Source: RMDB library RFM100, as collected in RNAgym. The record gives the reactivity of an RNA of 177 nucleotides to DMS and 2A3. Values cover nucleotides 27 to 126. For DMS the reverse transcriptase was MarathonRT. The DMS profile rests on 2,220 reads. The RNA was probed in 150 mM KOAc, 10 mM MgCl2 and 150 mM bicine (pH 8.5) at 24 C.
RNA sequence: GGGAACGACUCGAGUAGAGUCGAAAAUGUUCGUAAAUACAUAUUGGUGGUGGCAUCCGUUACAACUCCGGCAGUCGUAAGGGAGCAGUGCUCGUAUGUAUAUAUGUACAAUAUAGAUAUAUAAAAGUGUAGUGAAAGUGUUCGCACUUUCACUACAAAAAGAAACAACAACAACAAC
Reactivity to DMS in 0.01 (KOAc 150mM, MgCl2 10mM, bicine 150mM(pH8.5), 24C), signal-to-noise 2, nucleotides 027 to 126: u000g000u010u000c040g090u010a000a060a040u000a030c000a020u000a020u000u020g030g020u000g000g000u010g000g020c020a130u000c000c010g050u000u000a020c040a050a050c050u000c050c200g020g000c100a120g000u020c110g040u020a010a030g000g020g010a040g070c020a060g020u030g000c010u030c100g000u020a010u000g000u000a010u000a030u100a000u000g000u000a010c000a080a070u020a110u000a230g000a050u030a150u100a110u000a040a050a130a120g000
Reactivity to 2A3 in 0.01 (KOAc 150mM, MgCl2 10mM, bicine 150mM(pH8.5), 24C), signal-to-noise 2, nucleotides 027 to 126: u040g000u010u000c000g000u030a070a000a000u000a010c000a000u020a000u030u140g040g000u040g070g100u050g030g100c010a290u000c030c010g030u010u000a000c030a050a010c080u010c030c020g230g050c170a020g000u000c000g000u030a000a000g040g000g010a000g010c020a060g250u010g040c000u000c000g000u000a000u000g010u000a000u000a000u000a000u040g040u030a020c020a050a000u100a020u110a130g020a000u150a040u080a010u050a200a040a080a000g100